[RMDB]
RNA sequence: GGGAACGACUCGAGUAGAGUCGAAAAAUGCUAUAGGUAGCUCCUUGCUACCUGUAAGUCAGAAGCAGCACAGAAUUGGAAUGCAGGCAACCGGUCAUUUAUUCAUCUACUGAGGUAUUCGUACAACUCUUCCAACAUGGUGAACAUCUUGUGCUCACGAGGGGAUAAUUUUCGAAUUAUCCCCUCGAAAAGAAACAACAACAACAAC
Reactivity to DMS in 0.01 (KOAc 150mM, MgCl2 10mM, bicine 150mM(pH8.5), 24C), signal-to-noise 2, nucleotides 027 to 156: a090u000g000c010u000a060u000a030g050g030u000a010g010c000u000c300c210u010u000g030c000u000a010c000c000u000g000u000a020a100g000u000c040a090g020a140a170g010c050a040g000c050a050c040a070g010a130a110u000u000g010g010a060a100u000g000c020a060g020g010c080a070a090c070c040g000g040u020c060a050u020u020u000a080u050u020c050a060u000c030u000a130c060u000g010a070g030g030u000a130u000u000c090g040u000a040c050a040a060c040u000c040u000u000c040c020a050a080c060a110u010g000g010u000g020a030a090c060a040u030c050u000u000g010u010g010c010u000c000a130
Reactivity to 2A3 in 0.01 (KOAc 150mM, MgCl2 10mM, bicine 150mM(pH8.5), 24C), signal-to-noise 2, nucleotides 027 to 156: a000u040g000c000u010a010u010a010g000g000u000a010g030c030u120c040c080u030u300g000c010u020a000c000c000u000g020u000a000a030g030u040c080a010g010a040a020g030c050a010g000c010a010c020a030g210a140a050u100u040g040g010a040a020u060g060c070a020g040g000c000a040a070c010c000g050g040u070c030a040u030u070u140a140u160u090c020a090u030c050u150a080c050u100g050a010g020g010u090a070u080u110c040g000u030a070c000a070a070c060u000c000u110u020c030c000a030a030c040a150u120g020g020u080g060a050a050c010a020u000c010u010u070g010u060g000c000u030c010a010

This 207-nucleotide RNA was probed chemically with DMS and 2A3. Source: RMDB library OK3TST, as collected in RNAgym. For DMS the reverse transcriptase was MarathonRT. For 2A3 the reverse transcriptase was SuperScript II with manganese. Values are in units of 0.01, from 0 to 300, in steps of 10. The reactions ran in a buffer of 150 mM KOAc, 10 mM MgCl2 and 150 mM bicine (pH 8.5), at 24 C.